[RMDB]
RNA sequence: GGGAACGACUCGAGUAGAGUCGAAAAAGUAUCGAGCCGAUCGCUUGAUACAAAUGCCAGCUAUGUGGCAAAGUGUCAUAGUCAUAGGGAUACGACCUAUGAAAGUAUCCAAGACUCAUAGGAGUCAGCAUUGUAGUUCCUUCGGGAACUACAAUGCAAAAGAAACAACAACAACAAC
Reactivity to DMS in 0.01 (KOAc 150mM, MgCl2 10mM, bicine 150mM(pH8.5), 24C), signal-to-noise 2, nucleotides 027 to 126: a070g000u000a000u000c010g000a010g000c020c300g000a290u000c150g000c040u010u010g000a000u000a000c000a070a090a040u010g000c000c000a010g000c040u000a070u000g010u010g010g000c000a010a120a110g000u000g030u000c000a000u020a000g010u000c030a080u010a090g020g000g010a090u040a060c210g000a300c020c040u010a060u010g000a040a030a090g000u000a020u000c010c010a130a120g000a000c000u000c010a110u020a170g010g000a000g000u000c000a250
Reactivity to 2A3 in 0.01 (KOAc 150mM, MgCl2 10mM, bicine 150mM(pH8.5), 24C), signal-to-noise 2, nucleotides 027 to 126: a010g040u020a030u040c000g010a000g010c010c050g240a130u140c100g010c000u000u010g000a000u000a000c000a000a090a050u100g020c000c000a000g000c020u000a010u030g020u020g000g000c000a060a040a160g070u120g070u050c020a030u000a010g010u000c000a020u030a000g000g010g030a020u020a180c090g060a080c030c010u050a050u050g050a030a000a040g060u040a070u000c010c030a070a030g010a000c000u000c000a080u210a300g190g000a020g010u000c020a000
Chemical mapping of a 177-nucleotide RNA with DMS and 2A3. For DMS the reverse transcriptase was MarathonRT.